[RMDB]
RNA sequence: GGGAACGACUCGAGUAGAGUCGAAAAAACAUGAGCUGACAAAACGAUUACGUUUACGCACAGUUUCGCAAUUCCAUUUGAAGAAGAUGAACGUGAUCCUAAGACAUUCUUCUUAGAUUUGGAUUAUGUUGAAGAAAUGUGGAGGAUGUUCAGAAAAACACACAAUAACAUUCGUGUUAUUGUGUGUAAAAGAAACAACAACAACAAC
Reactivity to 2A3 in 0.01 (KOAc 150mM, MgCl2 10mM, bicine 150mM(pH8.5), 24C), signal-to-noise 8, nucleotides 027 to 156: a000a010c120a100u110g010a020g030c020u040g050a040c080a030a060a020a000c030g090a100u110u260a080c060g030u030u040u060a070c090g030c020a030c020a090g020u030u060u080c030g000c030a030a030u050u000c000c010a010u040u040u150g080a050a030g010a010a010g010a030u050g030a080a050c040g060u100g030a070u070c020c040u110a070a020g050a020c000a030u070u040c000u020u000c000u010u030a110g020a210u050u040u060g030g010a010u020u070a150u180g050u080u180g040a020a020g030a010a120a040u050g010u020g020g030a030g040g020a030u050g030u060u040c010a010g070a020a030a000a030
Reactivity to DMS in 0.01 (KOAc 150mM, MgCl2 10mM, bicine 150mM(pH8.5), 24C), signal-to-noise 4, nucleotides 027 to 156: a050a060c020a100u000g000a070g000c040u000g020a170c060a100a060a040a060c070g000a160u000u000a080c060g040u000u000u000a090c050g020c030a070c060a110g010u000u000u000c030g010c050a050a090u000u000c020c010a070u000u000u000g000a040a050g020a060a030g020a060u000g010a080a070c060g020u000g010a100u010c070c070u000a090a120g020a120c100a100u010u000c020u000u000c000u010u000a110g000a100u000u000u010g020g010a060u000u000a070u000g030u000u010g020a090a060g000a070a070a070u010g010u010g010g010a080g040g010a090u000g020u000u000c010a110g030a040a080a050a120